Structure probing data (2A3) for a 207-nucleotide construct. The reactions ran in a buffer of 150 mM KOAc, 10 mM MgCl2 and 150 mM bicine (pH 8.5), at 24 C. It was measured as part of the RMDB library OK3TST. For 2A3 the reverse transcriptase was SuperScript II with manganese.
[RMDB]
RNA sequence: GGGAACGACUCGAGUAGAGUCGAAAAAUGUUUUGGAUAUUUACAUAGAAACAAAGAAUUUGAAGACUGGAAAGAACUUGAGCAGGACUCUAUUAAAUGUGUUUUGUGUGAGAUGGUUUUCACCCUGUGUUCUUGUGGUUCCUCCAUGCUAGGGGCACACCAGUACGUGGUUCGCCACGUACUGGUGAAAAGAAACAACAACAACAAC
Reactivity to 2A3 in 0.01 (KOAc 150mM, MgCl2 10mM, bicine 150mM(pH8.5), 24C), signal-to-noise 1, nucleotides 027 to 156: a010u100g020u000u080u060u060g030g010a090u140a120u120u170u210a090c030a040u170a100g120a060a070a050c050a050a170a030g060a150a130u250u190u230g000a050a020g020a040c070u010g040g040a080a030a000g010a050a070c010u130u090g000a010g050c020a020g020g020a040c010u000c030u120a170u190u190a090a050a080u160g030u000g060u010u030u090u140g100u000g030u060g040a040g010a030u070g000g000u010u040u050u110c060a030c040c020c000u010g020u000g030u110u040c000u030u000g000u020g030g090u040u060c060c010u050c040c020a050u170g010c060u140a010g030g000g040g020c010a000